The record gives the reactivity of an RNA of 177 nucleotides to DMS and 2A3. Conditions: 150 mM KOAc, 10 mM MgCl2 and 150 mM bicine (pH 8.5), 24 C. For DMS, 3,140 sequencing reads were counted. Source: RMDB library OK2TRN, as collected in RNAgym.
RNA sequence: GGGAACGACUCGAGUAGAGUCGAAAAGGGAUAUAGCCCAAACCGAAAGGCUUGCCUUUCGGGGUUGUAGGACACUCAACAUGGAGUUACAAAGGAACGGGGUAGGUGAAGAGGCCUGGAAAGGCCACACGAAAGGUUAGUUCGCUAACCUUUCGUGAAAAGAAACAACAACAACAAC
Reactivity to DMS in 0.01 (KOAc 150mM, MgCl2 10mM, bicine 150mM(pH8.5), 24C), signal-to-noise 4, nucleotides 027 to 126: g000g000g000a130u000a050u020a100g020c000c020c030a040a120a170c030c010g000a000a010a020g010g010c040u020u010g020c000c000u000u000u000c000g010g000g000g020u010u000g040u010a070g020g020a150c230a080c030u010c060a080a130c170a130u000g000g000a060g010u000u000a100c090a020a090a100g000g010a090a060c140g000g010g000g000u010a040g020g020u000g010a060a070g010a110g010g010c020c020u000g000g020a030a100a020g010g010c010c020a080
Reactivity to 2A3 in 0.01 (KOAc 150mM, MgCl2 10mM, bicine 150mM(pH8.5), 24C), signal-to-noise 1, nucleotides 027 to 126: g040g000g030a070u060a030u100a230g000c000c000c050a020a040a010c010c010g000a000a000a000g050g000c100u120u240g100c000c010u000u000u000c000g020g000g010g000u010u070g040u000a020g020g010a020c030a020c070u100c010a050a190c050a240u160g180g000a020g050u030u080a100c070a090a170a010g050g040a070a020c060g010g000g000g030u060a040g000g000u060g000a060a000g070a080g050g020c020c050u020g030g060a060a080a000g010g000c000c000a000